[RMDB]
RNA sequence: GGGAACGACUCGAGUAGAGUCGAAAAGAAGCAUGUUUUUGUAUUACCCCGGCGAAUGCCAGUAAUACGUAGUUCGCUACCUUUGAUAUAGGAGGCGUAUGCCGGGCCUAUAUCGUUUUCAUGCGAAGGGUAAGCUAUGGUUCGCCAUAGCUUACCCAAAAGAAACAACAACAACAAC
Reactivity to DMS in 0.01 (KOAc 150mM, MgCl2 10mM, bicine 150mM(pH8.5), 24C), signal-to-noise 1, nucleotides 027 to 126: g010a120a080g050c040a020u000g000u000u000u020u010u020g000u000a000u000u010a080c000c050c180c240g030g000c020g000a130a150u000g000c000c000a160g010u000a000a000u000a000c030g030u040a020g020u000u000c010g000c030u060a020c050c230u010u030u010g000a010u000a000u000a020g030g030a160g000g000c000g010u000a090u090g050c000c040g000g020g020c000c020u010a000u000a010u000c020g020u080u010u000u000c020a040u040g020c000g000a140a090
Reactivity to 2A3 in 0.01 (KOAc 150mM, MgCl2 10mM, bicine 150mM(pH8.5), 24C), signal-to-noise 2, nucleotides 027 to 126: g140a010a000g000c030a020u060g160u000u020u050u080u170g010u030a000u000u000a000c010c020c120c050g000g000c080g190a300a050u300g000c000c000a000g010u000a030a010u020a010c020g000u090a110g040u010u030c030g000c070u060a030c000c000u080u050u230g040a050u040a000u010a040g000g010a030g010g040c000g180u190a140u130g000c010c000g020g050g000c000c010u020a010u000a010u020c010g000u000u010u070u100c120a000u040g010c030g040a050a060

The record gives the reactivity of an RNA of 177 nucleotides to DMS and 2A3. Values cover nucleotides 27 to 126. The DMS profile rests on 1,747 reads. The reactions ran in a buffer of 150 mM KOAc, 10 mM MgCl2 and 150 mM bicine (pH 8.5), at 24 C. The data come from the RNA Mapping Database (RMDB), library OK1LIB.